[RMDB]
RNA sequence: GGGAACGACUCGAGUAGAGUCGAAAAGCUAUACUAUUAUGACUCCAGCAACACCCAUGAUUGUUGGAAUAACUUGAUAUGGAUUUUACACUUAAGGAGCAUGGGGACAUUCUAGGCCAUAAUUACCAACAUGAAACCAGUUCGCUGGUUUCAUGUUAAAAGAAACAACAACAACAAC
Reactivity to 2A3 in 0.01 (KOAc 150mM, MgCl2 10mM, bicine 150mM(pH8.5), 24C), signal-to-noise 2, nucleotides 027 to 126: g000c010u030a020u030a180c000u000a030u300u030a080u090g040a040c050u030c000c020a000g000c020a020a010c010a110c010c070c010a040u060g020a110u020u030g040u020u000g030g070a030a010u120a060a030c060u040u020g030a050u060a060u220g080g000a080u050u050u060u230a060c090a020c040u090u090a150a070g020g010a030g000c010a050u030g010g000g040g000a000c000a010u060u010c030u040a040g000g040c000c010a060u110a140a060u160u060a050c080c050
Reactivity to DMS in 0.01 (KOAc 150mM, MgCl2 10mM, bicine 150mM(pH8.5), 24C), signal-to-noise 4, nucleotides 027 to 126: g010c050u000a060u010a110c060u000a070u000u000a040u000g010a100c070u010c010c020a040g000c020a060a060c090a130c090c060c050a040u010g000a290u000u000g000u010u000g010g020a080a030u010a060a070c080u000u010g000a130u000a040u000g000g010a080u000u010u000u000a140c120a090c150u010u000a100a070g010g010a110g000c050a040u000g010g020g000g000a060c060a020u010u000c060u000a040g020g000c050c050a080u000a050a040u000u010a110c070c050
Source: RMDB library OK2TRN, as collected in RNAgym.
The record gives the reactivity of an RNA of 177 nucleotides to 2A3 and DMS.
Reactivities are given for positions 27 through 126.
For DMS, 3,287 sequencing reads were counted.